[RMDB]
RNA sequence: GGGAACGACUCGAGUAGAGUCGAAAAGUGGACGCUGCCUGGCCAGCGGCAGUCCGCUCUGCGCGUCAGGAACGGCGCCACCCGCGCCGUACGCGAUAUCUGGCGCGCCGGCCGGCGCGCUUCGCGAAUCGUCCUAUGCAUUCGUGCAUAGGACGAUAAAAGAAACAACAACAACAAC
Reactivity to DMS in 0.01 (KOAc 150mM, MgCl2 10mM, bicine 150mM(pH8.5), 24C), signal-to-noise 1, nucleotides 027 to 126: g000u000g030g010a010c010g020c000u020g000c000c040u020g020g010c000c000a300g000c000g020g040c070a110g010u000c040c020g010c020u010c100u000g000c010g000c050g050u000c010a030g000g020a090a040c000g010g040c000g000c000c120a100c040c160c090g000c030g000c000c030g000u050a050c070g020c040g000a040u000a020u000c050u000g000g000c050g020c140g110c030c300g000g040c140c100g100g080c190g090c100g030c050u000u000c010g000c000g000a140

The data come from the RNA Mapping Database (RMDB), library OK2TRN. Structure probing data (DMS) for a 177-nucleotide construct. For DMS the reverse transcriptase was MarathonRT. Reactivities are given for positions 27 through 126.